Conditions: 150 mM KOAc, 10 mM MgCl2 and 150 mM bicine (pH 8.5), 24 C.
Structure probing data (DMS) for a 177-nucleotide construct.
For DMS, 1,071 sequencing reads were counted.
[RMDB]
RNA sequence: GGGAACGACUCGAGUAGAGUCGAAAAGAUAGCUGCAGCAACCUCGCUCCCAGGCCCCUCAGAGAGGCAGCCCCUCAGCCACAGGCGAGUGUUGCAGGGGUGCAGGCCCACACGGGCGGCAGCUGGACUCCUACUCCCAGUUCGCUGGGAGUAGGAGAAAAGAAACAACAACAACAAC
Reactivity to DMS in 0.01 (KOAc 150mM, MgCl2 10mM, bicine 150mM(pH8.5), 24C), signal-to-noise 1, nucleotides 027 to 126: g020a160u010a000g020c010u000g000c020a060g000c010a070a080c040c020u000c010g050c040u000c040c050c030a240g000g000c010c000c020c000u000c110a110g000a100g030a060g000g000c080a270g000c070c030c000c020u000c040a100g030c030c040a070c190a080g000g000c070g000a050g020u010g040u000u000g000c020a060g000g000g000g000u010g020c040a040g020g020c010c000c010a150c180a100c210g020g000g020c030g000g000c040a020g010c000u000g000g000a300